[RMDB]
RNA sequence: GGGAACGACUCGAGUAGAGUCGAAAAGAUAUGGAGUUGUAGGACAUGUCGGUCGGAAACGACAGCGACAACAGCCUAAACUCCUAAGUCAAACCUUAACGUGAUUGUUCGCAAUCACGUUAAGGAAGAUCCGCUAUCACUUCGGUGAUAGCGGAUCAAAAGAAACAACAACAACAAC
Reactivity to DMS in 0.01 (KOAc 150mM, MgCl2 10mM, bicine 150mM(pH8.5), 24C), signal-to-noise 1, nucleotides 027 to 126: g000a030u010a300u000g000g000a000g000u010u000g020u000a000g020g000a020c110a250u010g000u010c000g010g020u000c000g010g000a090a060a210c000g030a000c000a010g030c010g040a000c000a000a100c160a180g010c000c010u010a000a000a000c000u000c000c000u000a000a020g010u000c060a170a190a160c000c000u000u000a000a000c000g020u000g000a010u000u000g000u000u000c300g000c010a070a040u000c000a000c030g030u010u000a000a010g020g000a010a080
Reactivity to 2A3 in 0.01 (KOAc 150mM, MgCl2 10mM, bicine 150mM(pH8.5), 24C), signal-to-noise 2, nucleotides 027 to 126: g030a010u060a060u080g010g010a010g010u040u070g300u230a000g050g000a050c080a240u080g020u000c020g010g030u000c000g030g010a080a070a020c020g030a000c000a040g300c080g040a010c020a140a040c050a060g000c000c010u000a020a030a030c010u000c020c000u010a080a020g050u010c060a070a030a120c010c000u000u020a000a000c000g000u000g030a010u010u020g050u130u130c300g040c130a000a010u010c010a000c000g000u000u000a000a000g000g000a000a000
The record gives the reactivity of an RNA of 177 nucleotides to DMS and 2A3. The data come from the RNA Mapping Database (RMDB), library TTRDEL. For DMS, 724 sequencing reads were counted. Conditions: 150 mM KOAc, 10 mM MgCl2 and 150 mM bicine (pH 8.5), 24 C. 2A3 adducts were read by reverse transcription with SuperScript II with manganese.